[RMDB]
RNA sequence: GGGAACGACUCGAGUAGAGUCGAAAAGAUAUGGACUAUGGGAGAUCGGAGGUCGGAAACGACCUCGAUCGACGAUCAUAGGUCCUAAGUCAAAAGAUGUACCAAUACUUCGGUAUUGGUACAUCAACGUUGAUAAAUGGUUCGCCAUUUAUCAACGAAAAGAAACAACAACAACAAC
Reactivity to 2A3 in 0.01 (KOAc 150mM, MgCl2 10mM, bicine 150mM(pH8.5), 24C), signal-to-noise 4, nucleotides 027 to 126: g040a020u090a040u150g010g000a000c000u000a000u020g010g030g000a040g010a010u030c110g300g090a060g010g010u000c000g020g010a070a060a020c020g000a000c000c000u000c000g000a000u000c010g000a020c000g010a000u010c000a000u000a030g100g180u050c000c000u020a150a020g070u040c040a030a020a090a160g010a000u000g000u000a000c000c000a000a000u010a000c010u030u110c300g140g000u010a000u010u000g000g000u000a010c000a000u000c000a000a000
Reactivity to DMS in 0.01 (KOAc 150mM, MgCl2 10mM, bicine 150mM(pH8.5), 24C), signal-to-noise 7, nucleotides 027 to 126: g010a040u000a300u000g000g010a130c010u000a010u000g000g000g010a040g000a010u000c000g030g030a020g010g010u000c000g010g000a080a070a160c000g010a010c010c000u000c000g000a000u000c000g000a070c220g010a040u000c000a000u000a020g020g010u000c000c000u010a040a150g000u000c040a070a060a150a110g000a010u000g010u000a000c000c000a000a010u000a000c000u000u010c220g020g010u000a000u000u000g000g000u000a000c000a000u000c000a030a090
The record gives the reactivity of an RNA of 177 nucleotides to 2A3 and DMS.
For 2A3 the reverse transcriptase was SuperScript II with manganese.
Reactivities are rounded to 0.1 and cut off at 0 and 3.
For DMS the reverse transcriptase was MarathonRT.
The RNA was probed in 150 mM KOAc, 10 mM MgCl2 and 150 mM bicine (pH 8.5) at 24 C.